An RNA of 207 nucleotides, treated with 2A3 and read out base by base. Conditions: 150 mM KOAc, 10 mM MgCl2 and 150 mM bicine (pH 8.5), 24 C. For 2A3, 1,044 sequencing reads were counted. The data come from the RNA Mapping Database (RMDB), library RNAMAK. 2A3 adducts were read by reverse transcription with SuperScript II with manganese. As a SHAPE reagent, 2A3 marks flexible, mostly unpaired nucleotides at the ribose 2'-OH.
RNA sequence: GGGAACGACUCGAGUAGAGUCGAAAAAAAAAACGCUGGGAUCAUUCGCUUCGGAUCAGCAAGCCUAUCUGAAGCGCGCACGGAUAGGUGAUGACCUGAUUCCGAAGCGAUGAUCCUGUGCUGAAGCGCGCACGGCAACCGAAAGGUGCGAAAAAAACCUUAGCAUAGUGUUCGCACUAUGCUAAGGAAAAGAAACAACAACAACAAC
Reactivity to 2A3 in 0.01 (KOAc 150mM, MgCl2 10mM, bicine 150mM(pH8.5), 24C), signal-to-noise 1, nucleotides 027 to 156: a000a000a000a000a000a000c000g000c000u010g010g000g000a010u000c010a050u300u300c070g000c010u000u010c010g000g000a020u000c010a020g000c040a020a010g000c010c000u010a010u000c000u040g040a170a060g000c000g000c010g000c010a030c000g000g000a000u000a000g020g000u070g040a260u020g000a000c000c010u010g000a010u300u110c020c000g010a000a000g000c000g000a000u000g000a000u010c000c000u000g010u010g010c000u000g000a060a010g000c000g000c030g010c010a010c030g030g000c010a030a000c000c010g070a110a030a050g040g010u060g020c030g060a070a040a000a000a050a020a010